[RMDB]
RNA sequence: GGGAACGACUCGAGUAGAGUCGAAAAGGCCGAGAGUUCGCUCUCGGCCAAAGAAUAAAAGAGCGAACCCAACCGAAACAACGCUCAAAGAAGGGAGGGAAAAAAGCAUAAUCUUCGGAUUAUGCAAGAUCGAGUACUAGUUCGCUAGUACUCGAUCAAAAGAAACAACAACAACAAC
Reactivity to DMS in 0.01 (KOAc 150mM, MgCl2 10mM, bicine 150mM(pH8.5), 24C), signal-to-noise 1, nucleotides 027 to 126: g010g000c070c000g010a060g010a070g060u000u000c180g090c000u000c000u000c000g060g010c000c000a000a090a010g000a050a010u060a100a020a180a130g000a020g010c000g000a030a250c040c040c010a210a260c110c040g000a210a050a060c120a090a150c000g000c060u000c090a060a060a060g040a160a120g000g010g000a130g000g000g000a000a050a000a100a000a160g000c000a000u000a000a000u000c000u000u010c280g060g000a000u000u000a010u000g000c000a070a040
The record gives the reactivity of an RNA of 177 nucleotides to DMS. Reactivities are given for positions 27 through 126. It was measured as part of the RMDB library M2PK50. The RNA was probed in 150 mM KOAc, 10 mM MgCl2 and 150 mM bicine (pH 8.5) at 24 C.